RNA sequence: GGGAACGACUCGAGUAGAGUCGAAAAAAAAAAGCCAGGUGCAGUGGCUCAUGCCUUAUAAUCCCAACACUUUUGGAGGCCGAGGCAGGCAGGAUCACUUAAGGUCAGGAGUUUCAGACCAGUCUGGACUUAUCAUGGCGUUCGCGCCAUGAUAAGUAAAAGAAACAACAACAACAAC
Reactivity to 2A3 in 0.01 (KOAc 150mM, MgCl2 10mM, bicine 150mM(pH8.5), 24C), signal-to-noise 2, nucleotides 027 to 126: a000a000a000a000a000a000g080c050c000a040g000g020u110g060c050a010g030u020g020g000c010u020c030a040u090g030c000c010u080u090a120u040a140a140u020c010c010c000a040a070c020a040c030u130u130u120u150g140g020a030g050g000c020c030g020a060g030g000c040a030g000g050c000a000g020g040a010u040c050a010c070u130u160a070a050g060g010u070c020a030g070g110a050g040u020u080u070c050a050g010a020c000c030a010g030u000c030u020g020g030
Reactivity to DMS in 0.01 (KOAc 150mM, MgCl2 10mM, bicine 150mM(pH8.5), 24C), signal-to-noise 1, nucleotides 027 to 126: a000a000a000a000a000a000g000c040c000a000g000g050u010g040c060a140g000u000g030g030c050u000c020a080u030g000c070c040u000u000a110u040a130a090u010c020c000c030a040a070c280a150c110u020u000u000u010g000g010a110g000g010c120c100g000a040g010g020c090a030g000g020c000a010g000g010a010u030c060a060c090u000u000a060a070g030g000u000c010a070g000g000a110g000u000u000u140c030a050g020a110c040c010a150g000u000c020u000g030g010